[RMDB]
The record gives the reactivity of an RNA of 177 nucleotides to 2A3. The 2A3 profile rests on 628 reads. Conditions: 150 mM KOAc, 10 mM MgCl2 and 150 mM bicine (pH 8.5), 24 C. 2A3 adducts were read by reverse transcription with SuperScript II with manganese. It was measured as part of the RMDB library OK1LIB.

RNA sequence: GGGAACGACUCGAGUAGAGUCGAAAAUAAUAAAAGGACAUUUACCGAUGGCACGCCUAUGAUUUCCGGGCCCUGCCCUAAAGAUGGCCAGCCAUCUUUAGUACUACAGUCCUCCUCCUUUAUAAAAGGAUACUGAUCCGUUCGCGGAUCAGUAUCCAAAAGAAACAACAACAACAAC
Reactivity to 2A3 in 0.01 (KOAc 150mM, MgCl2 10mM, bicine 150mM(pH8.5), 24C), signal-to-noise 2, nucleotides 027 to 126: u190a000a000u080a000a090a020a000g070g040a050c060a050u130u040u090a200c030c030g040a000u110g000g010c040a000c100g010c000c000u010a140u060g110a190u020u120u180c080c060g060g010g000c030c050c030u010g020c000c000c000u040a060a060a000g040a020u090g000g000c040c040a040g090c030c000a000u010c000u000u000u060a040g000u050a110c020u020a030c010a000g000u000c000c000u000c050c020u150c010c000u080u240u020a230u090a150a190a000a070